[RMDB]
RNA sequence: GGGAACGACUCGAGUAGAGUCGAAAAGAUAUGGACGGAUGUACUUUUGACGCCUAGUGUAGUAGCUAUAUACUCGGAAACGAGUAUAUAGCUACUACAGGGCGAUAAGUAUUAUCCGUCCUAAGUCCAUAGCACAAAGGUUCGCCUUUGUGCUAUGAAAAGAAACAACAACAACAAC
Reactivity to DMS in 0.01 (KOAc 150mM, MgCl2 10mM, bicine 150mM(pH8.5), 24C), signal-to-noise 3, nucleotides 027 to 126: g000a110u010a300u010g010g000a010c000g010g000a020u000g000u000a010c010u000u010u010u010g020a300c100g020c000c010u000a130g050u000g010u000a010g010u000a010g010c000u000a010u000a010u000a010c000u000c000g010g000a150a100a200c000g010a010g010u000a000u000a000u000a000g010c000u000a000c010u010a010c000a080g000g000g020c000g010a030u010a000a010g000u000a000u000u010a030u010c010c000g030u010c000c000u000a000a090g000u000c050